[RMDB]
RNA sequence: GGGAACGACUCGAGUAGAGUCGAAAACGCCAUUCGUGGCGAUUGCCGCGUACUACCCUGACAUGCGUAUACCAUGGAGUAGGAUCCCAAAUAGGAUCCUACUAUGAAGUGGUAAUACGCAACAGCAGGGUAUCGCCAGAAACACUUUCGAGUGUAACGUAAGAAACGCGUUCGCGCGUUUCUUACGAAAAGAAACAACAACAACAAC
Reactivity to 2A3 in 0.01 (KOAc 150mM, MgCl2 10mM, bicine 150mM(pH8.5), 24C), signal-to-noise 2, nucleotides 027 to 156: c040g010c000c000a120u100u080c220g090u040g000g020c000g040a040u030u260g230c110c050g010c000g060u040a180c060u000a010c030c000c000u000g110a170c040a120u050g020c000g000u000a010u000a030c000c040a000u010g040g030a030g000u010a000g000g000a000u030c040c040c020a220a240a000u270a100g030g000a000u020c000c000u000a000c000u000a170u000g080a050a060g000u050g000g000u000a010a080u000a010c000g040c000a000a000c010a010g010c000a010g000g020g000u000a000u060c000g000c000c020a070g070a070a290a010c040a010c020u250u270u260c300g120a040g020u100g000u060a010a040